[RMDB]
Notes: Conditions: 150 mM KOAc, 10 mM MgCl2 and 150 mM bicine (pH 8.5), 24 C. An RNA of 207 nucleotides, treated with 2A3 and DMS and read out base by base. High 2A3 reactivity points to a flexible backbone, as in loops and unpaired stretches. The DMS profile rests on 1,696 reads.
RNA sequence: GGGAACGACUCGAGUAGAGUCGAAAACAUGGCAGCAUAUUACAACUAUAAUGUUGUUGGUGAGUUGAUAAUAUUAUACACCGCUAACGAAUCAUUAACUCGAUCGGCAUCAUAUGCUAGCGCAUCAUCCGAGGAUUCUAUAGAACGUGAACAAAUGCUCAUACCGUAAGUUCGCUUACGGUAUGAGAAAAGAAACAACAACAACAAC
Reactivity to 2A3 in 0.01 (KOAc 150mM, MgCl2 10mM, bicine 150mM(pH8.5), 24C), signal-to-noise 3, nucleotides 027 to 156: c030a020u010g090g000c000a000g000c030a050u010a050u070u200a090c100a150a060c080u130a210u140a300a220u190g010u050u000g000u000u000g030g030u150g040a140g010u070u010g040a060u050a150a040u060a100u280u090a050u040a050c060a030c070c020g010c070u030a050a030c010g020a020a030u100c020a030u150u150a100a020c060u050c040g090a170u040c000g050g020c050a010u050c010a020u180a020u170g010c010u050a100g000c080g000c070a050u070c010a000u000c030c000g010a050g050g000a040u090u040c020u030a050u050a140g040a140a030c040g010u010g010a050a000c070a090a040a080u160g010
Reactivity to DMS in 0.01 (KOAc 150mM, MgCl2 10mM, bicine 150mM(pH8.5), 24C), signal-to-noise 1, nucleotides 027 to 156: c090a130u010g020g080c000a000g010c040a070u000a020u000u050a110c000a030a110c020u000a110u010a090a170u000g000u000u000g040u020u010g020g010u000g020a120g030u010u000g010a070u000a060a100u000a180u020u020a100u010a080c020a150c000c060g070c040u000a080a150c080g010a140a070u000c060a170u000u040a040a160c040u000c010g000a110u000c050g010g000c000a100u020c100a090u000a130u010g010c020u000a090g020c020g010c040a110u000c020a090u010c050c000g000a100g010g000a070u000u010c040u010a210u000a140g010a040a020c060g040u000g010a040a060c040a040a050a080u000g020